[RMDB]
RNA sequence: GGGAACGACUCGAGUAGAGUCGAAAAGAUAUGGACUCCCGUAGGGAGCCUCGUCGGAAACGACAAGGCAUCGAUCUAUAGGAGUCCUAAGUCAAAAGCCCAUUUUCUCUUCGGAGAAAAUGGGCAACUGUAUCUAUUUCUUCGGAAAUAGAUACAGAAAAGAAACAACAACAACAAC
Reactivity to DMS in 0.01 (KOAc 150mM, MgCl2 10mM, bicine 150mM(pH8.5), 24C), signal-to-noise 2, nucleotides 027 to 126: g000a020u000a140u000g000g000a030c000u000c010c000c000g020u000a010g020g010g000a050g000c000c000u000c040g000u000c000g010g010a050a030a070c000g000a000c000a000a020g010g020c000a160u010c080g020a060u010c000u000a010u010a090g000g000a010g000u000c000c000u000a010a060g000u000c010a120a090a100a150g010c010c000c010a000u000u000u000u000c010u000c000u000u010c170g000g010a020g010a010a010a000a000u000g000g020g000c010a000a000
Reactivity to 2A3 in 0.01 (KOAc 150mM, MgCl2 10mM, bicine 150mM(pH8.5), 24C), signal-to-noise 1, nucleotides 027 to 126: g010a000u030a010u060g020g000a000c000u000c000c040c000g000u010a010g080g300g010a000g000c000c000u000c040g040u000c010g000g000a010a000a030c010g000a000c020a030a010g000g000c050a160u110c030g150a120u080c010u010a010u010a020g030g020a000g000u000c000c000u000a010a000g020u000c020a030a050a110a090g010c000c000c000a000u030u000u020u000c000u000c000u010u090c290g070g000a000g000a000a000a000a000u010g000g000g050c010a010a000